[RMDB]
RNA sequence: GGGAACGACUCGAGUAGAGUCGAAAAGAUAUGGACCAGAUAUAUCAGAAGGUCGGAAACGACACUUCUAUGACGUAUGUGGUCCUAAGUCAAAAGUGCUUGAUUUACUUCGGUAAAUCAAGCACAACGUGGAAUCAACGUUCGCGUUGAUUCCACGAAAAGAAACAACAACAACAAC
Reactivity to 2A3 in 0.01 (KOAc 150mM, MgCl2 10mM, bicine 150mM(pH8.5), 24C), signal-to-noise 1, nucleotides 027 to 126: g040a010u030a010u040g010g010a000c000c000a000g100a080u040a000u000a010u120c000a020g000a000a000g040g000u000c050g000g060a090a090a030c010g040a020c150a200c300u030u000c000u030a250u220g020a080c050g000u040a000u000g300u000g020g020u000c010c000u000a030a030g030u030c000a060a090a040a100g000u020g000c000u000u000g000a000u000u040u000a010c030u020u140c280g060g000u000a000a000a010u000c000a010a000g000c020a000c000a000a000
Reactivity to DMS in 0.01 (KOAc 150mM, MgCl2 10mM, bicine 150mM(pH8.5), 24C), signal-to-noise 1, nucleotides 027 to 126: g000a010u000a300u010g000g010a040c030c000a010g030a010u000a000u000a080u010c010a020g010a000a000g040g000u000c010g030g000a060a080a180c000g000a030c010a160c010u000u000c020u000a100u000g000a040c030g010u000a010u000g000u000g030g020u000c000c000u000a020a100g020u000c020a050a070a080a100g080u010g020c000u000u000g000a040u000u000u000a010c000u000u020c190g050g010u010a010a000a020u000c000a010a010g010c000a000c010a010a050